[RMDB]
RNA sequence: GGGAACGACUCGAGUAGAGUCGAAAAGAUAUGGAUGCACUUCGAUAAGCGACGGUCGGAAACGACCGAAUCGCUUUUGACGAAGGGGUCCUAAGUCAAAAGCAUUAUCAGUUCGCUGAUAAUGCAACGAAUGAGAUCAGUUCGCUGAUCUCAUUCGAAAAGAAACAACAACAACAAC
Reactivity to DMS in 0.01 (KOAc 150mM, MgCl2 10mM, bicine 150mM(pH8.5), 24C), signal-to-noise 3, nucleotides 027 to 126: g010a040u000a240u000g000g000a020u010g030c050a110c000u000u000c010g030a130u000a020a020g010c000g030a030c010g000g000u000c000g000g000a050a080a180c000g000a010c000c000g000a070a050u000c000g010c000u000u000u010u020g030a220c110g000a010a000g000g020g020g030u000c000c000u020a060a170g000u000c040a090a080a140a170g000c000a010u000u000a000u000c000a010g010u000u020c290g020c000u020g010a010u000a000a000u000g000c000a020a050
Reactivity to 2A3 in 0.01 (KOAc 150mM, MgCl2 10mM, bicine 150mM(pH8.5), 24C), signal-to-noise 2, nucleotides 027 to 126: g010a020u030a030u140g010g000a010u070g240c130a100c210u020u010c040g160a210u060a290a000g010c030g000a020c000g020g000u000c010g020g020a000a050a030c010g000a000c040c000g010a020a000u020c010g000c030u030u010u010u080g070a040c010g000a020a000g000g000g010g020u030c010c030u040a100a000g020u020c050a070a050a080a080g000c000a000u020u020a010u000c010a000g090u080u150c270g080c140u020g000a000u000a000a010u000g000c000a000a000
An RNA of 177 nucleotides, treated with DMS and 2A3 and read out base by base. The reactions ran in a buffer of 150 mM KOAc, 10 mM MgCl2 and 150 mM bicine (pH 8.5), at 24 C. Values cover nucleotides 27 to 126.